[RMDB]
RNA sequence: GGGAACGACUCGAGUAGAGUCGAAAAGAUAUGGAUGGCUGUUCUUUUGACGAGACCACAUCGGAAACGAUGUCCCUCUCGAUAAGAACUGCCAUCCUAAGUCAAAAGGGAAUGUUCGCAUUCCCAACCUGAUCAUAUACUUCGGUAUAUGAUCAGGAAAAGAAACAACAACAACAAC
Reactivity to 2A3 in 0.01 (KOAc 150mM, MgCl2 10mM, bicine 150mM(pH8.5), 24C), signal-to-noise 2, nucleotides 027 to 126: g020a020u040a020u110g010g000a000u000g010g000c020u030g010u010u000c040u040u180u160u300g300a230c120g010a010g000a010c030c060a010c060a000u010c000g020g020a040a040a020c010g000a000u010g020u030c050c020c000u010c010u000c000g140a180u080a300a010g000a000a000c000u000g000c000c000a000u000c000c000u000a000a000g000u000c020a000a010a080a210g020g000g020a020a000u020g040u130u190c300g010c190a000u000u010c000c000c020a010a010
Reactivity to DMS in 0.01 (KOAc 150mM, MgCl2 10mM, bicine 150mM(pH8.5), 24C), signal-to-noise 6, nucleotides 027 to 126: g000a040u000a260u010g000g010a010u010g010g010c000u000g010u000u000c000u010u000u000u010g010a220c140g000a040g000a020c140c290a020c000a010u000c000g000g000a060a070a140c010g020a010u000g010u000c150c110c120u000c000u000c000g010a120u010a030a010g010a010a000c000u000g000c000c000a000u010c010c000u000a000a050g000u010c030a080a080a120a160g000g000g010a030a010u010g020u000u020c250g030c020a020u000u000c000c000c000a040a050